[RMDB]
Structure probing data (DMS and 2A3) for a 177-nucleotide construct. The data come from the RNA Mapping Database (RMDB), library OK2TST. Reactivities are given for positions 27 through 126. 2A3 is a SHAPE reagent: it acylates the 2'-hydroxyl of flexible nucleotides of all four kinds. The RNA was probed in 150 mM KOAc, 10 mM MgCl2 and 150 mM bicine (pH 8.5) at 24 C. 2A3 adducts were read by reverse transcription with SuperScript II with manganese.

RNA sequence: GGGAACGACUCGAGUAGAGUCGAAAAUCGCGCCGGUUGUCCGCGGAUGGCGCCAGCGCCGCCGCCUCGACGAGCGACAGGAAUUCAGCAGGAUCCAGACCCGUCAUACCCGGGCCCCAGCGGCCGGUGGGGAUUAUGUAUUCGUACAUAAUCCCCAAAAAGAAACAACAACAACAAC
Reactivity to DMS in 0.01 (KOAc 150mM, MgCl2 10mM, bicine 150mM(pH8.5), 24C), signal-to-noise 5, nucleotides 027 to 126: u010c060g010c060g020c040c020g000g020u000u000g020u000c050c140g010c050g020g000a060u000g020g010c020g020c060c140a100g010c030g020c030c020g020c010c020g010c030c060u000c090g000a060c060g000a120g020c030g010a070c090a080g000g000a070a090u000u000c070a090g010c100a080g000g010a100u010c020c040a130g010a150c030c010c010g010u010c110a120u010a130c090c030c010g000g000g010c020c030c030c090a130g000c080g000g010c020c020g000g020
Reactivity to 2A3 in 0.01 (KOAc 150mM, MgCl2 10mM, bicine 150mM(pH8.5), 24C), signal-to-noise 1, nucleotides 027 to 126: u040c010g010c020g000c090c000g120g040u060u060g000u030c010c010g040c060g070g030a150u090g030g010c020g020c000c000a130g090c000g030c010c020g010c010c020g000c000c000u040c030g080a060c000g000a000g040c030g060a060c030a030g080g000a040a050u090u060c030a020g010c020a040g180g010a030u030c000c000a030g160a210c000c000c010g040u040c030a060u030a120c000c000c000g130g060g000c020c010c010c000a050g030c100g030g000c020c060g000g040